An RNA of 177 nucleotides, treated with DMS and 2A3 and read out base by base. For 2A3, 1,341 sequencing reads were counted. The RNA was probed in 150 mM KOAc, 10 mM MgCl2 and 150 mM bicine (pH 8.5) at 24 C.
RNA sequence: GGGAACGACUCGAGUAGAGUCGAAAAUGAAAUCAAAAAUAGAGAAGUGAAGGCUGAGAUGGUAAUGGUAAUGAAGCUAGGAUAUUGUCACUGGUUUACGGUAACCACCACCACCAAAAUAAAAAAACAUAGGAUACGGAUUCGUCCGUAUCCUAUGAAAAGAAACAACAACAACAAC
Reactivity to DMS in 0.01 (KOAc 150mM, MgCl2 10mM, bicine 150mM(pH8.5), 24C), signal-to-noise 2, nucleotides 027 to 126: u000g000a050a110a130u000c070a040a040a070a040a080u000a110g020a130g000a090a050g010u000g030a020a080g020g020c060u010g010a100g000a030u000g000g020u000a040a040u020g000g010u000a020a080u010g000a030a040g010c070u000a050g040g020a030u020a100u000u020g020u000c080a080c040u000g020g000u000u000u010a050c090g020g000u030a110a040c030c030a050c060c050a060c020c020a030c030c090a030a040a080a080u040a010a010a080a060a080a020a130
Reactivity to 2A3 in 0.01 (KOAc 150mM, MgCl2 10mM, bicine 150mM(pH8.5), 24C), signal-to-noise 2, nucleotides 027 to 126: u030g000a040a020a070u110c080a040a080a090a060a050u160a060g090a000g030a110a040g070u040g070a070a040g060g030c020u010g000a030g030a200u040g010g000u050a040a060u060g030g000u060a030a070u080g030a050a010g100c020u010a010g040g000a040u070a090u120u210g080u030c080a060c180u000g000g050u010u010u030a090c000g020g000u020a030a030c000c000a000c030c020a000c000c000a050c000c030a000a020a100a040u240a000a040a000a010a000a000a000